[RMDB]
RNA sequence: GGGAACGACUCGAGUAGAGUCGAAAAGAGUGAGCGAGGCAGGCAGAGCUGGUCGUUUUUUUUCUUCUUUCUUGGCAGAGUGAGGAAUCGGGUCUAUAUGUGGGGCGAGAGCUAUGCGGAACAACAAGGGAUAUGAUAACUUCGGUUAUCAUAUCCCAAAAGAAACAACAACAACAAC
Reactivity to 2A3 in 0.01 (KOAc 150mM, MgCl2 10mM, bicine 150mM(pH8.5), 24C), signal-to-noise 3, nucleotides 027 to 126: g110a010g070u110g010a060g020c010g020a050g030g020c030a000g030g010c010a000g000a030g110c020u020g060g000u020c010g010u010u010u000u020u000u010u020u050c060u080u020c020u050u080u040c010u000u030g060g030c040a000g010a030g060u070g020a030g020g020a030a100u090c070g000g070g020u000c060u020a160u040a030u300g060u070g000g000g020g000c040g000a080g000a010g030c030u020a020u150g040c050g000g060a090a060c070a060a010c020a100a150
Reactivity to DMS in 0.01 (KOAc 150mM, MgCl2 10mM, bicine 150mM(pH8.5), 24C), signal-to-noise 3, nucleotides 027 to 126: g010a060g020u010g010a050g000c050g010a110g020g010c040a030g010g010c050a030g000a070g000c030u010g010g010u000c050g010u000u030u000u000u060u000u000u010c010u000u000c050u000u020u000c010u030u000g000g020c100a040g020a040g030u020g010a030g000g000a080a050u010c100g000g000g000u000c050u030a070u000a070u000g000u000g010g010g000g000c060g000a110g000a050g000c050u000a050u010g040c060g010g030a160a050c190a050a050c260a080a130